Structure probing data (DMS and 2A3) for a 207-nucleotide construct. It was measured as part of the RMDB library M2RFPK. For 2A3 the reverse transcriptase was SuperScript II with manganese. For DMS, 5,193 sequencing reads were counted.

[RMDB]
RNA sequence: GGGAACGACUCGAGUAGAGUCGAAAAGUUAGGUGAGGCUCCUCUGCAAACACAGGCCACUGCCCAAAAAUGUCCAAAGACGCCAAUGGGUAGAACAGGGAUUGUCGGAUUAAGGCUUUCCAUAAUGAAAACAAAGUAUGCUUCGGCAUACUUUGAAGUUUUACUGUAAGUUCGCUUACAGUAAAACAAAAGAAACAACAACAACAAC
Reactivity to DMS in 0.01 (KOAc 150mM, MgCl2 10mM, bicine 150mM(pH8.5), 24C), signal-to-noise 3, nucleotides 027 to 156: g000u000u010a060g040g030u000g010a120g000g020c040u000c030c010u010c000u000g030c070a060a090a070c040a090c060a110g000g000c040c040a080c010u010g000c010c020c020a020a060a080a130a110u000g000u000c030c030a080a100a150g010a090c050g020c070c050a060a210u000g000g010g050u000a050g000a080a100c090a120g030g040g010a060u000u010g000u000c010g010g000a180u010u010a110a140g000g030c090u000u010u000c010c040a130u000a070a120u020g000a100a050a060a200c000a010a020a010g000u000a010u000g000c010u000u010c300g030g000c000a020u000a000c000u010u000u000g010a040a060
Reactivity to 2A3 in 0.01 (KOAc 150mM, MgCl2 10mM, bicine 150mM(pH8.5), 24C), signal-to-noise 4, nucleotides 027 to 156: g040u050u070a040g000g050u030g050a050g030g010c010u040c020c020u050c020u060g010c030a060a110a030c050a020c030a090g060g010c020c010a020c010u020g000c000c000c000a000a020a010a010a030u010g010u000c030c050a190a060a120g010a000c010g000c000c010a030a050u010g000g000g000u010a010g000a050a030c060a060g060g000g010a040u020u060g030u060c020g010g040a050u140u170a080a050g020g000c000u030u030u030c020c000a040u140a170a100u170g110a050a050a030a030c000a000a000a000g000u010a000u000g000c000u030u080c150g080g000c000a000u000a000c000u000u000u010g000a010a010